[RMDB]
RNA sequence: GGGAACGACUCGAGUAGAGUCGAAAAGAGCGAACCGGGACCAGCCCAGCUUGAGAAUCGGGUGGCUUCGUCACCUGAAUUGUAGUCUGGAGAGGCGUCCUCAGCGACGGACCGGGCCCAAGUUCCCUGGCAGUACACGUUUCGACGUGUACUGCCAAAAAGAAACAACAACAACAAC
Reactivity to 2A3 in 0.01 (KOAc 150mM, MgCl2 10mM, bicine 150mM(pH8.5), 24C), signal-to-noise 2, nucleotides 027 to 126: g030a000g060c040g020a060a030c000c000g010g000g100a040c050c000a030g120c020c000c000a050g020c000u110u110g120a090g100a140a140u020c000g000g000g120u000g040g000c000u100u150c300g000u050c000a000c000c000u020g030a070a130u000u000g120u100a040g060u030c000u000g040g000a100g020a050g170g030c020g020u020c000c000u190c060a130g030c170g080a000c010g000g060a000c000c000g000g080g000c000c010c000a050a000g000u000u000c000c000c020
Reactivity to DMS in 0.01 (KOAc 150mM, MgCl2 10mM, bicine 150mM(pH8.5), 24C), signal-to-noise 1, nucleotides 027 to 126: g010a270g000c120g060a030a290c040c000g000g000g000a300c030c000a150g000c240c000c000a070g000c030u000u020g000a070g000a240a040u000c010g000g010g040u000g070g040c020u060u030c300g000u020c000a000c000c000u000g060a040a000u000u000g030u010a050g000u000c010u000g000g130a190g040a300g010g060c040g000u010c030c000u100c220a100g000c010g000a070c030g000g010a190c000c000g000g000g000c000c000c030a100a220g040u000u000c000c000c000
This 177-nucleotide RNA was probed chemically with 2A3 and DMS. The RNA was probed in 150 mM KOAc, 10 mM MgCl2 and 150 mM bicine (pH 8.5) at 24 C. For 2A3, 577 sequencing reads were counted. Reactivities are rounded to 0.1 and cut off at 0 and 3.